[RMDB]
RNA sequence: GGGAACGACUCGAGUAGAGUCGAAAAGAUAUGGACCCAAGUAGGGAGUAGGAUCGGAAACGAUCCAACUUUGAUCUACUGGGUCCUAAGUCAAAGUUUCGCCCAUCCUUCGGGAUGGGCGAAACAACGUACAGAAUUGGUUCGCCAAUUCUGUACGAAAAGAAACAACAACAACAAC
Reactivity to 2A3 in 0.01 (KOAc 150mM, MgCl2 10mM, bicine 150mM(pH8.5), 24C), signal-to-noise 1, nucleotides 027 to 126: g000a010u020a020u060g000g000a010c050c000c000a060a020g020u000a010g000g200g020a000g030u070a110g010g000a000u000c000g000g000a050a010a020c000g000a010u000c010c000a000a000c000u040u030u280g290a150u020c000u000a000c000u020g010g040g010u020c000c000u010a010a000g000u030c000a160a040a090g010u000u000u020c020g000c090c000c020a000u030c020c000u120u170c300g130g060g020a030u040g040g110g000c010g020a000a010a000c000a000a000
Reactivity to DMS in 0.01 (KOAc 150mM, MgCl2 10mM, bicine 150mM(pH8.5), 24C), signal-to-noise 1, nucleotides 027 to 126: g000a020u000a080u010g000g000a010c000c000c000a030a060g000u000a000g000g000g000a000g020u010a070g010g000a020u000c000g020g000a020a000a050c000g010a000u000c000c000a020a010c000u000u000u020g000a160u020c000u000a010c000u000g010g000g000u000c000c000u000a000a030g000u000c000a110a140a180g000u000u000u000c000g020c000c000c020a000u000c000c000u000u010c200g010g030g050a030u010g000g000g020c000g000a000a000a010c010a050a120
Structure probing data (2A3 and DMS) for a 177-nucleotide construct. Conditions: 150 mM KOAc, 10 mM MgCl2 and 150 mM bicine (pH 8.5), 24 C. Reactivities are given for positions 27 through 126. For DMS, 2,151 sequencing reads were counted. DMS adducts were read by reverse transcription with MarathonRT. The data come from the RNA Mapping Database (RMDB), library TTRDEL.